RNA sequence: GGGAACGACUCGAGUAGAGUCGAAAAGUGCCGAUUGAAAUUCAUGGGAGCCUCUCCAUAAUGGAUGAACGCCGCGUUAGUUCGCGCAGUCGCGACGUAAACGCUCUGUCUUCCCGUUCAGGCCUCAAUUAUCGCACUAGUUCGCUAGUGCGAUAAUAAAAGAAACAACAACAACAAC
Reactivity to 2A3 in 0.01 (KOAc 150mM, MgCl2 10mM, bicine 150mM(pH8.5), 24C), signal-to-noise 2, nucleotides 027 to 126: g080u060g030c030c000g070a100u060u200g060a090a110a130u130u070c060a070u060g000g000g050a030g040c050c030u110c020u000c040c010a060u170a240a050u180g010g020a020u040g010a100a010c040g050c060c010g020c000g020u000u050a060g040u190u090c020g000c020g000c060a030g200u230c030g010c020g020a020c010g010u040a080a080a000c010g000c000u020c020u020g050u010c000u010u010c030c000c010g000u030u040c000a030g040g010c010c010u050c030a050
Reactivity to DMS in 0.01 (KOAc 150mM, MgCl2 10mM, bicine 150mM(pH8.5), 24C), signal-to-noise 4, nucleotides 027 to 126: g000u000g030c040c030g010a150u000u010g000a100a110a080u000u010c060a060u000g010g000g010a070g000c090c050u010c040u010c000c010a090u010a100a080u000g010g010a060u000g020a080a040c060g030c080c080g010c010g020u000u010a170g000u010u000c090g030c080g010c200a140g010u000c050g020c010g010a030c040g000u010a050a080a080c070g010c030u010c050u000g020u010c080u000u000c030c000c020g020u000u000c080a070g000g010c030c050u010c130a110